[RMDB]
RNA sequence: GGGAACGACUCGAGUAGAGUCGAAAAGCACGUGGGUUCAGAUGAUGGGCCCGCAUCUGUACGAAAGUGAGACGAAAGUCCAGCCCACGUGCAUGAGCACGCGGGCCCCGUGCUCUUCAGCAAAAGACGUAUUAGGGAGUUUCGACUCCCUAAUACGAAAAGAAACAACAACAACAAC
Reactivity to DMS in 0.01 (KOAc 150mM, MgCl2 10mM, bicine 150mM(pH8.5), 24C), signal-to-noise 2, nucleotides 027 to 126: g010c000a000c000g010u010g000g000g000u010u000c000a020g020a010u010g010a030u050g020g010g000c000c030c040g010c010a010u000c000u000g040u020a030c020g020a070a140a130g000u000g020a150g010a020c000g000a060a150a130g000u000c000c020a050g000c010c000c000a020c000g040u010g020c000a010u000g000a110g010c000a000c000g050c220g030g000g030c000c000c000c010g000u010g000c000u000c010u000u020c090a120g040c180a120a060a130a080g000a150
Reactivity to 2A3 in 0.01 (KOAc 150mM, MgCl2 10mM, bicine 150mM(pH8.5), 24C), signal-to-noise 5, nucleotides 027 to 126: g010c000a000c000g000u010g000g000g020u080u060c030a020g000a040u020g000a040u090g020g000g000c010c000c000g000c000a000u000c000u010g080u080a060c080g150a160a060a030g090u100g040a150g010a050c000g080a120a030a010g000u000c010c000a000g000c000c000c000a000c000g000u000g000c000a000u030g000a000g000c010a000c010g010c060g000g000g000c000c000c000c000g000u010g000c000u000c000u070u100c040a150g010c060a050a070a040a030g150a040

Chemical mapping of a 177-nucleotide RNA with DMS and 2A3. It was measured as part of the RMDB library OK1LIB. The RNA was probed in 150 mM KOAc, 10 mM MgCl2 and 150 mM bicine (pH 8.5) at 24 C.